Structure probing data (DMS and 2A3) for a 207-nucleotide construct.

[RMDB]
RNA sequence: GGGAACGACUCGAGUAGAGUCGAAAAGUCUUACUUACGGGAAGGGCUUGAUGACGAGCACGUAGAUUUUGUCGGCGAUCUCACUACUCCGUUUUACGCUGAUGCGGGUUACGCAUACAGCUUGAUGGACAUUAACUGGCGUCACAACCAGUCCACACCUUUAAUACAAGUUCGCUUGUAUUAAAGGAAAAGAAACAACAACAACAAC
Reactivity to DMS in 0.01 (KOAc 150mM, MgCl2 10mM, bicine 150mM(pH8.5), 24C), signal-to-noise 4, nucleotides 027 to 156: g020u000c040u000u000a090c050u000u000a100c110g010g020g030a150a100g010g000g020c030u010u020g020a130u000g020a130c040g010a090g040c050a060c060g020u000a070g020a130u000u000u000u000g010u000c020g010g030c040g000a070u010c020u000c050a100c040u000a070c050u000c010c020g010u000u000u010u000a060c130g000c010u010g020a080u010g010c000g000g020g030u000u010a080c010g010c010a040u000a100c030a010g020c010u000u000g000a060u000g010g010a050c070a110u010u000a040a070c020u010g000g020c020g010u000c260a110c160a120a040c010c010a040g000u000c040c040a060c090a180
Reactivity to 2A3 in 0.01 (KOAc 150mM, MgCl2 10mM, bicine 150mM(pH8.5), 24C), signal-to-noise 9, nucleotides 027 to 156: g010u010c020u050u100a100c020u080u080a030c110g060g000g040a050a040g040g010g010c000u050u040g050a090u120g030a090c060g020a020g040c060a030c100g040u070a060g020a180u050u060u060u140g110u060c020g020g030c020g030a080u010c030u020c060a040c080u090a030c020u010c010c020g020u010u010u060u070a050c060g000c000u000g000a000u010g000c010g000g060g070u190u140a090c010g000c010a000u120a240c000a060g000c000u010u040g020a020u020g010g020a020c070a120u120u140a070a020c030u010g010g000c010g060u080c030a020c010a080a020c010c000a010g000u010c010c000a050c000a010
The 2A3 profile rests on 19,084 reads.
For DMS, 12,444 sequencing reads were counted.
DMS adducts were read by reverse transcription with MarathonRT.
Conditions: 150 mM KOAc, 10 mM MgCl2 and 150 mM bicine (pH 8.5), 24 C.
2A3 adducts were read by reverse transcription with SuperScript II with manganese.